[RMDB]
RNA sequence: GGGAACGACUCGAGUAGAGUCGAAAAGAUAUGGAACCCUAAAGAGCGAUAAGCUGCUCGGAAACGAGACAGCUUUUGACGCUCAUAAGGGUUCCUAAGUCAAAAAAGAUCCGCUUCGGCGGAUCAAGAAGUGUUACUAGUUCGCUAGUAACACUUCAAAAGAAACAACAACAACAAC
Reactivity to DMS in 0.01 (KOAc 150mM, MgCl2 10mM, bicine 150mM(pH8.5), 24C), signal-to-noise 4, nucleotides 027 to 126: g000a030u010a300u000g000g010a010a020c000c000c000u000a050a160a150g000a020g030c010g010a140u000a010a020g010c000u000g010c010u000c000g010g000a070a100a180c000g010a010g010a130c010a000g010c000u000u000u000u000g010a170c050g010c000u000c000a030u000a120a030g000g010g010u000u000c000c000u000a010a060g010u010c010a000a030a070a070a140a150g000a010u000c010c000g030c000u000u010c220g060g010c010g000g000a000u000c000a030a060
Reactivity to 2A3 in 0.01 (KOAc 150mM, MgCl2 10mM, bicine 150mM(pH8.5), 24C), signal-to-noise 2, nucleotides 027 to 126: g010a010u050a030u130g000g010a000a020c000c000c010u100a250a300a020g010a000g010c030g040a060u010a120a010g010c010u000g000c000u010c000g010g010a030a060a000c010g000a000g160a110c000a000g000c000u020u000u010u040g040a030c010g000c010u000c010a000u130a010a000g000g000g000u000u000c000c000u000a010a000g000u000c000a060a010a020a010a000a210g010a000u000c010c000g020c020u030u050c150g110g000c000g000g000a010u000c000a000a000
Conditions: 150 mM KOAc, 10 mM MgCl2 and 150 mM bicine (pH 8.5), 24 C.
The record gives the reactivity of an RNA of 177 nucleotides to DMS and 2A3.